[RMDB]
RNA sequence: GGGAACGACUCGAGUAGAGUCGAAAAAUUCCAGUGCAUAUCUUAGUGAUACUCCAGUUAACUCUAUACUUUCCCUGCAAUACGCUAUUCGCCUUAGAUGUAUCUGGGUGGCUGCUCCACUAAAGCCAGUAAAGCACUAUUUCGAUAGUGCUUUACUAAAAGAAACAACAACAACAAC
Reactivity to DMS in 0.01 (KOAc 150mM, MgCl2 10mM, bicine 150mM(pH8.5), 24C), signal-to-noise 9, nucleotides 027 to 126: a130u010u000c000c010a080g010u010g000c050a080u010a030u000c030u000u010a070g020u010g000a110u010a080c060u010c030c030a070g010u010u000a070a100c060u010c030u010a080u020a100c070u000u000u000c010c000c010u010g010c100a080a070u010a070c110g010c040u000a060u010u010c060g020c050c040u010u010a050g010a070u010g000u010a050u010c050u000g000g000g030u000g000g000c040u010g010c060u000c030c020a050c100u020a050a070a080g010c080c100
Reactivity to 2A3 in 0.01 (KOAc 150mM, MgCl2 10mM, bicine 150mM(pH8.5), 24C), signal-to-noise 9, nucleotides 027 to 126: a000u090u020c000c000a010g040u050g040c020a020u030a050u100c020u050u100a060g020u050g090a040u050a140c030u010c020c010a030g020u050u060a110a060c030u030c050u080a060u070a190c040u050u050u030c010c000c000u010g010c020a040a070u060a110c040g010c030u040a070u060u070c030g030c020c000u070u070a050g010a100u100g040u090a060u040c030u030g040g000g010u020g020g000c010u030g010c010u010c020c010a040c030u080a090a030a020g050c030c010

Structure probing data (DMS and 2A3) for a 177-nucleotide construct.
Reactivities are rounded to 0.1 and cut off at 0 and 3.
It was measured as part of the RMDB libraries RFM100 and RFMREP.
2A3 adducts were read by reverse transcription with SuperScript II with manganese.
The RNA was probed in 150 mM KOAc, 10 mM MgCl2 and 150 mM bicine (pH 8.5) at 24 C.